An RNA of 177 nucleotides, treated with 2A3 and DMS and read out base by base.
Values cover nucleotides 27 to 126.
The reactions ran in a buffer of 150 mM KOAc, 10 mM MgCl2 and 150 mM bicine (pH 8.5), at 24 C.
RNA sequence: GGGAACGACUCGAGUAGAGUCGAAAAGAUAUGGACCCACCCAGCUUUUGACGAGCCGCCCAUCGGAAACGAUGGGAUGGCUCGAUAAGCUGGUGGGUCCUAAGUCAAAUCACGCUUCGGCGUGAAACAAGGGAACUGUGUUCGCACAGUUCCCUUGAAAAGAAACAACAACAACAAC
Reactivity to 2A3 in 0.01 (KOAc 150mM, MgCl2 10mM, bicine 150mM(pH8.5), 24C), signal-to-noise 1, nucleotides 027 to 126: g010a000u050a020u050g000g010a000c000c040c030a030c050c150c000a000g040c040u100u160u300u300g300a280c280g000a000g020c010c000g000c000c000c000a000u000c000g030g000a000a050a030c020g000a010u000g000g000g000a000u010g010g020c000u000c000g000a000u000a000a000g040c000u020g040g020u000g000g010g000u030c000c000u000a010a010g000u000c000a030a040a100u030c000a000c020g000c000u110u080c300g140g030c010g020u000g050a060a010a020
Reactivity to DMS in 0.01 (KOAc 150mM, MgCl2 10mM, bicine 150mM(pH8.5), 24C), signal-to-noise 2, nucleotides 027 to 126: g000a040u000a300u000g000g010a050c000c000c010a010c100c110c090a010g020c000u000u000u000u010g020a190c150g000a010g000c000c000g010c000c000c000a010u010c000g020g000a050a080a180c000g020a000u010g000g010g010a000u010g010g020c010u010c000g000a050u000a000a030g020c010u000g010g020u000g000g000g000u000c000c010u000a000a040g000u010c000a170a200a190u000c000a000c000g050c000u000u020c230g010g000c000g030u010g010a030a060a160